[RMDB]
RNA sequence: GGGAACGACUCGAGUAGAGUCGAAAAUUGAUAAGGCUGGCUCCCUGGCAUGGGAGCGCCGCAUGGGCCAAGUGUGGUAGCCGAAGGGCUAGGCCCGUGACAAAUGGUAUCAGAGCCGCCUCGGCAAUCAAUAGAUAAGGUUCGCCUUAUCUAUUGAAAAAGAAACAACAACAACAAC
Reactivity to 2A3 in 0.01 (KOAc 150mM, MgCl2 10mM, bicine 150mM(pH8.5), 24C), signal-to-noise 3, nucleotides 027 to 126: u080u060g020a010u040a110a070g010g000c000u050g200g040c000u040c000c010c000u040g230g100c130a150u180g020g000g000a000g000c000g010c000c010g000c000a000u000g000g000g000c000c030a070a090g080u110g050u090g260g140u110a030g000c000c010g010a060a040g040g010g010c000u010a030g000g000c000c000c020g000u010g000a020c040a010a130a040u170g050g000u040a010u080c030a020g010a030g120c000c040g050c040c010u020c010g000g000c000a000a060
Reactivity to DMS in 0.01 (KOAc 150mM, MgCl2 10mM, bicine 150mM(pH8.5), 24C), signal-to-noise 6, nucleotides 027 to 126: u010u010g010a040u000a030a110g010g020c020u000g040g030c000u000c000c000c000u000g020g030c240a100u000g000g000g000a020g020c010g020c000c020g000c010a010u000g010g010g000c010c010a150a160g010u020g010u000g010g010u000a070g010c000c000g000a080a060g010g010g010c000u000a080g010g010c000c000c010g040u000g000a070c080a080a060a070u000g010g010u000a030u000c040a080g010a090g010c020c010g010c030c020u000c050g000g000c030a140a100